[RMDB]
RNA sequence: GGGAACGACUCGAGUAGAGUCGAAAAUCCUUUCUCGCUAGAGAUUGGAGUCAUACAACCCCAGAAACCAUUCCUUAUACCUUGAGUAUUGCUGAAUUCAGUUUAGCGUGCAUGCUCUUGGCUAUUCAUACCAAGGACAACUUCGGUUGUCCUUGAAGUAAUGCUGUUUGUUCGCAAACAGCAUUACAAAAGAAACAACAACAACAAC
Reactivity to DMS in 0.01 (KOAc 150mM, MgCl2 10mM, bicine 150mM(pH8.5), 24C), signal-to-noise 2, nucleotides 027 to 156: u010c000c010u000u000u000c000u000c000g000c250u020a130g030a020g020a020u000u010g000g010a060g020u000c120a170u010a190c070a100a130c040c010c010c020a130g000a130a110a080c090c090a220u010u000c020c020u020u020a220u000a040c000c000u000u000g010a040g040u000a010u010u000g040c000u000g000a070a060u000u000c110a200g020u000u010u000a070g010c060g030u000g030c120a160u010g000c010u000c010u020u010g000g020c020u000a100u000u000c070a110u000a150c070c000a030a030g000g010a010c000a020a010c010u000u000c300g090g010u000u010g000u000c000c000u010u000g000a020a100
Reactivity to 2A3 in 0.01 (KOAc 150mM, MgCl2 10mM, bicine 150mM(pH8.5), 24C), signal-to-noise 5, nucleotides 027 to 156: u000c000c000u010u010u000c010u010c010g070c100u130a040g010a000g000a010u000u000g020g000a010g070u100c040a060u130a220c070a060a160c030c010c000c030a040g110a060a090a040c070c030a100u130u170c030c020u150u160a040u040a130c010c010u020u010g000a010g010u020a080u200u140g000c010u010g050a120a090u170u200c040a130g120u040u060u130a060g010c050g020u070g030c030a000u010g000c000u000c000u000u020g000g000c010u070a070u130u190c080a050u040a210c090c000a010a000g000g000a000c000a000a000c010u030u090c210g070g010u000u010g000u020c000c000u000u000g000a010a000